The data come from the RNA Mapping Database (RMDB), library OK2TST. Structure probing data (DMS and 2A3) for a 177-nucleotide construct. The 2A3 profile rests on 3,489 reads. DMS adducts were read by reverse transcription with MarathonRT. The RNA was probed in 150 mM KOAc, 10 mM MgCl2 and 150 mM bicine (pH 8.5) at 24 C.

[RMDB]
RNA sequence: GGGAACGACUCGAGUAGAGUCGAAAAUCAGUGGACUGAAAUAGUUUUAGCCAGGUAUAGCCCCAUUCACAAUACGUGGCGGGCAGGGUGGAGCGGAAUAUGUCUAAAACAGAAACCCUUCAUAAACAUCAAUGAUGAAUUUCGAUUCAUCAUUGAUAAAAGAAACAACAACAACAAC
Reactivity to DMS in 0.01 (KOAc 150mM, MgCl2 10mM, bicine 150mM(pH8.5), 24C), signal-to-noise 5, nucleotides 027 to 126: u010c050a090g020u000g010g000a100c040u000g010a040a100a140u010a070g000u000u020u010u000a060g000c030c010a040g020g010u000a090u000a170g000c070c020c010c030a100u000u000c060a060c080a120a100u000a070c120g000u000g010g020c100g010g010g030c080a050g000g010g030u000g010g000a080g020c090g010g000a090a060u010a070u010g010u000c040u000a040a030a040a030c050a080g000a100a120a090c040c010c040u000u010c090a050u010a080a100a100c210
Reactivity to 2A3 in 0.01 (KOAc 150mM, MgCl2 10mM, bicine 150mM(pH8.5), 24C), signal-to-noise 4, nucleotides 027 to 126: u040c020a010g070u080g090g070a080c050u030g030a040a090a150u170a100g050u050u020u050u030a020g010c020c010a060g090g020u100a090u040a140g010c010c010c020c010a030u130u100c020a020c030a120a140u180a200c130g030u020g050g010c060g000g000g000c010a030g050g010g020u090g010g030a070g010c070g010g040a080a040u090a040u110g040u000c000u060a030a030a060a000c030a020g050a060a050a040c030c010c000u010u110c100a190u120a050a120a040c040